The record gives the reactivity of an RNA of 207 nucleotides to 2A3 and DMS. For 2A3 the reverse transcriptase was SuperScript II with manganese.

[RMDB]
RNA sequence: GGGAACGACUCGAGUAGAGUCGAAAACAAGAUGCUGUGGCUCUGGCACAACGUGUUCACCCCGGCGUGGGAGGGCAUCAAGACCGGCAUCGGCGCGGCCUGGGACUUCAUCAAGGGCGUAUUCGACAAGAUCAAAUCCGGUUUCGACACGCUCAAGUCUUCGUAUCCUUUUCGAAGGAUACGAAGAAAAAGAAACAACAACAACAAC
Reactivity to 2A3 in 0.01 (KOAc 150mM, MgCl2 10mM, bicine 150mM(pH8.5), 24C), signal-to-noise 2, nucleotides 027 to 156: c080a030a020g050a040u050g010c030u050g030u190g060g020c010u000c020u060g060g000c020a000c000a100a140c170g000u010g030u070u030c060a090c030c000c000c040g110g000c060g000u140g010g040g010a100g010g020g000c020a020u050c060a100a040g020a030c030c000g020g020c020a070u130c080g040g000c040g000c010g010g030c000c000u030g010g000g030a040c020u060u030c080a080u020c060a150a100g010g000g000c020g020u010a130u000u120c000g020a030c040a090a040g030a090u080c070a030a080a080u010c040c020g040g000u040u040u030c020g020a000c020a000c060g000c000u030c010a020a070g030
Reactivity to DMS in 0.01 (KOAc 150mM, MgCl2 10mM, bicine 150mM(pH8.5), 24C), signal-to-noise 1, nucleotides 027 to 156: c070a110a210g030a090u010g030c020u000g070u000g030g020c020u000c060u000g000g040c020a050c010a090a060c150g050u010g020u000u000c030a120c010c000c000c000g010g030c120g020u000g020g000g010a140g000g000g060c040a090u000c050a060a120g020a080c010c020g030g020c070a180u010c080g000g010c000g020c040g030g020c010c000u000g030g020g000a080c070u000u000c050a130u010c040a070a170g010g000g000c040g000u000a080u000u000c060g020a040c030a110a130g010a160u000c170a070a050a300u010c020c010g000g000u020u000u000c020g000a060c070a020c000g000c010u010c030a050a100g000
Values are in units of 0.01, from 0 to 300, in steps of 10.